[RMDB]
RNA sequence: GGGAACGACUCGAGUAGAGUCGAAAAUAAGUUCUAGGGAGACGGAAUUUCGUUACGUCGCUCAUUUAUCAAUAUUAUCAUCCUCACUACAUUGGUAAAUAAGCGAAUAAAGUAUCGUAUCAUUUAUAGAAUACUAUUUAUUCGUAAAUAGUAUUCUAAAAGAAACAACAACAACAAC
Reactivity to DMS in 0.01 (KOAc 150mM, MgCl2 10mM, bicine 150mM(pH8.5), 24C), signal-to-noise 5, nucleotides 027 to 126: u030a070a150g010u000u010c010u000a120g000g010g000a090g000a040c070g010g010a070a070u010u010u000c030g000u000u000a050c080g000u000c000g010c000u000c050a010u000u000u000a010u000c000a010a000u000a090u030u020a100u020c140a090u020c050c030u020c100a100c200u000a090c170a030u000u000g000g010u000a010a010a010u000a030a010g010c000g000a040a080u020a090a060a100g000u000a020u010c020g000u010a050u020c040a050u010u010u020a140u020
Reactivity to 2A3 in 0.01 (KOAc 150mM, MgCl2 10mM, bicine 150mM(pH8.5), 24C), signal-to-noise 9, nucleotides 027 to 126: u140a030a020g040u030u030c040u090a080g030g050g010a060g020a020c030g040g080a070a070u080u110u110c040g030u030u040a020c050g020u010c000g000c000u000c000a000u000u000u010a000u000c000a000a010u030a080u170u200a100u130c070a090u090c040c080u120c050a120c080u180a060c030a090u000u010g000g000u000a000a010a000u010a010a000g000c000g020a020a030u120a080a100a020g040u030a020u070c020g010u030a030u130c020a030u060u090u130a210u010
Overview
The record gives the reactivity of an RNA of 177 nucleotides to DMS and 2A3. Reactivities are rounded to 0.1 and cut off at 0 and 3. 2A3 adducts were read by reverse transcription with SuperScript II with manganese. The RNA was probed in 150 mM KOAc, 10 mM MgCl2 and 150 mM bicine (pH 8.5) at 24 C. Source: RMDB libraries RFM100 and RFMREP, as collected in RNAgym.